Chemical mapping of a 177-nucleotide RNA with 2A3 and DMS. It was measured as part of the RMDB library OK2TST. For 2A3 the reverse transcriptase was SuperScript II with manganese. The RNA was probed in 150 mM KOAc, 10 mM MgCl2 and 150 mM bicine (pH 8.5) at 24 C.
[RMDB]
RNA sequence: GGGAACGACUCGAGUAGAGUCGAAAAAGGCGCCGGCGCAUUCGAGCACGCGACCACGAUGCCGAAUCAGGUGGGGAUGCCGUUUAACACUAUCGUCAAUAGACCCGGGUACGCUCCUCUGGCCAUCGAGUAAAUCCAAAUUCGUUUGGAUUUACUCAAAAGAAACAACAACAACAAC
Reactivity to 2A3 in 0.01 (KOAc 150mM, MgCl2 10mM, bicine 150mM(pH8.5), 24C), signal-to-noise 4, nucleotides 027 to 126: a000g070g000c030g010c040c020g030g010c050g000c050a040u060u070c040g030a040g040c040a020c060g050c030g090a070c020c020a040c040g050a080u070g000c010c000g000a020a060u060c040a050g080g040u050g020g040g000g010a040u060g030c020c010g020u070u090u080a110a030c080a020c050u050a040u160c050g070u020c040a060a080u030a120g050a090c010c020c030g000g000g020u050a070c060g010c010u000c020c010u050c040u040g050g000c010c000a070u100c070
Reactivity to DMS in 0.01 (KOAc 150mM, MgCl2 10mM, bicine 150mM(pH8.5), 24C), signal-to-noise 5, nucleotides 027 to 126: a140g010g010c040g020c100c030g020g010c060g030c080a100u010u010c040g000a130g000c040a050c050g010c040g000a140c100c090a120c070g000a090u000g010c030c030g020a070a050u010c090a070g010g010u000g020g000g000g000a080u010g020c010c030g020u010u010u010a060a090c120a100c060u000a070u010c070g010u000c090a080a120u000a090g010a090c050c040c030g010g000g010u010a040c090g000c030u000c020c010u000c050u010g000g020c040c050a100u010c180